[RMDB]
An RNA of 177 nucleotides, treated with DMS and read out base by base. For DMS the reverse transcriptase was MarathonRT. For DMS, 3,337 sequencing reads were counted.

RNA sequence: GGGAACGACUCGAGUAGAGUCGAAAACCAUAGGAUUUCGAUCCUAUGGCCUGCUAUGUCGCGUAAUAGCUUUUCGACUCUACUUGGGUCGUUCCCACGGGAUGGGGACCGGUUUCGACCGGUCCAAGAACGAGAAAAGUUUCGACUUUUCUCGUUCAAAAGAAACAACAACAACAAC
Reactivity to DMS in 0.01 (KOAc 150mM, MgCl2 10mM, bicine 150mM(pH8.5), 24C), signal-to-noise 2, nucleotides 027 to 126: c010c000a000u000a000g000g000a020u000u000u010c160g010a020u000c000c010u000a000u000g010g010c200c130u010g020c020u000a010u010g000u010c210g010c290g000u010a080a020u000a010g010c010u000u000u000u000c000g010a010c000u000c000u000a000c000u000u000g000g000g010u000c000g010u000u000c000c000c000a000c040g000g000g000a120u000g020g020g020g000a020c000c000g000g000u000u010u000c180g010a040c000c000g020g000u000c000c010a020a020